Chemical mapping of a 207-nucleotide RNA with 2A3. Values cover nucleotides 27 to 156.

RNA sequence: GGGAACGACUCGAGUAGAGUCGAAAAUUUUUUGAGACAGAGUCUUGCUGUGUCACUCAGACUGGAGUGCAGUGGCGCCAUCUUGGCUCAUUGCAGCCUCUGCCUCCUGGGUUCAAGUGAUUCUCCUGCCUCAUCCGCCUGAGUAGCUGGGGUUACACGAUUAUCUGUCAUUCGUGACAGAUAAUCGAAAAGAAACAACAACAACAAC
Reactivity to 2A3 in 0.01 (KOAc 150mM, MgCl2 10mM, bicine 150mM(pH8.5), 24C), signal-to-noise 2, nucleotides 027 to 156: u070u070u050u040u020u060g040a030g010a000c050a040g040a000g050u000c020u060u050g040c020u060g050u070g070u180c040a020c010u000c010a040g030a160c100u060g020g020a010g000u170g000c020a010g000u000g000g040c060g000c010c020a120u160c140u180u230g040g000c050u030c090a040u000u120g000c100a070g000c000c010u040c010u020g000c000c010u010c010c030u000g010g000g010u050u050c010a040a010g010u000g040a010u040u040c000u030c040c030u030g000c000c000u040c000a020u020c030c020g030c060c030u050g050a030g040u020a060g020c060u060g030g000g020g040u040u040a080c090a010